Structure probing data (DMS and 2A3) for a 177-nucleotide construct. It was measured as part of the RMDB library OK1LIB. DMS adducts were read by reverse transcription with MarathonRT. The reactions ran in a buffer of 150 mM KOAc, 10 mM MgCl2 and 150 mM bicine (pH 8.5), at 24 C.
[RMDB]
RNA sequence: GGGAACGACUCGAGUAGAGUCGAAAAAUGCCCAUGAAGGCGUUGAGGUCCGACAAGAUAUUGAGCGGGUACUGCGGGUUGUGGGCGUAGCCGUCGUAUUGGCCGGUGUACAUGUAGGUCUGGUAGGCUGGUGGUGAGUUUUCGAACUCACCACCAGAAAAGAAACAACAACAACAAC
Reactivity to DMS in 0.01 (KOAc 150mM, MgCl2 10mM, bicine 150mM(pH8.5), 24C), signal-to-noise 1, nucleotides 027 to 126: a000u070g020c000c000c000a070u000g060a040a130g010g010c060g050u010u010g010a100g030g000u000c000c040g010a100c020a070a080g040a140u030a070u000u000g000a070g000c030g020g000g000u020a020c010u040g050c040g000g000g060u010u000g040u040g000g010g000c020g000u010a000g010c010c050g000u000c080g000u060a050u030u040g020g030c110c000g020g020u000g000u060a040c130a100u030g010u010a070g000g000u020c030u010g000g000u000a070g000g000
Reactivity to 2A3 in 0.01 (KOAc 150mM, MgCl2 10mM, bicine 150mM(pH8.5), 24C), signal-to-noise 1, nucleotides 027 to 126: a000u280g040c000c000c000a000u170g120a120a100g170g000c020g000u050u040g120a000g010g110u020c000c000g000a000c060a040a000g020a060u250a120u190u300g020a070g000c020g000g040g010u010a040c060u060g090c010g000g000g040u000u060g020u020g000g000g000c000g000u000a000g000c010c000g040u120c010g000u060a060u070u030g110g010c000c000g010g030u030g050u180a020c000a030u160g070u300a060g000g000u000c030u000g030g020u000a000g090g000